[RMDB]
RNA sequence: GGGAACGACUCGAGUAGAGUCGAAAAAAGAAUAGCCCCACCCUAUUUGAUGAGGCCCUACACUCAGACCUGGCAGAUUUCAGGGUGAGGUAUCCAGCUUUAGUCCUCCUACAAUACGUAGAUGACCUAGUCGGUUCCUGUUCGCAGGAACCGACUAAAAAGAAACAACAACAACAAC
Reactivity to 2A3 in 0.01 (KOAc 150mM, MgCl2 10mM, bicine 150mM(pH8.5), 24C), signal-to-noise 1, nucleotides 027 to 126: a000a000g190a010a010u040a120g000c000c000c000c000a030c140c000c000u100a150u070u090u200g200a230u010g040a130g000g030c000c000c000u060a050c000a030c090u060c060a100g070a140c060c000u030g110g010c090a080g000a150u020u300u290c100a030g000g000g000u000g000a020g000g070u070a050u050c030c030a010g020c060u030u290u000a080g050u090c000c030u080c010c030u030a010c020a070a280u170a240c040g000u030a000g000a150u060g040a160c000c000